[RMDB]
This 177-nucleotide RNA was probed chemically with DMS. Conditions: 150 mM KOAc, 10 mM MgCl2 and 150 mM bicine (pH 8.5), 24 C. The DMS profile rests on 1,134 reads. Values cover nucleotides 27 to 126. High DMS reactivity at an A or C suggests that its Watson-Crick edge is free.
RNA sequence: GGGAACGACUCGAGUAGAGUCGAAAAGAUAUGGAGAACUCUAGGGAGCCUCCGAUCGGAAACGAUCGCAUAGGCGAAGAACUAGGUUCUCCUAAGUCAAAUCAAGCUUCCUUCGGGAAGCUUGAAAGUGUGAUAGUAGGUUCGCCUACUAUCACACAAAAGAAACAACAACAACAAC
Reactivity to DMS in 0.01 (KOAc 150mM, MgCl2 10mM, bicine 150mM(pH8.5), 24C), signal-to-noise 2, nucleotides 027 to 126: g000a050u000a010u030g010g010a010g000a000a000c010u030c020u010a000g030g030g000a060g000c010c000u000c300c000g020a010u000c000g040g000a020a010a020c000g000a000u000c000g020c300a100u020a030g020g000c000g010a050a160g000a140a300c000u000a000g010g020u000u000c050u020c000c000u000a010a000g000u020c020a150a170a180u000c010a030a020g000c020u000u000c000c000u020u000c260g040g010g020a010a010g010c000u000u000g000a010a050a070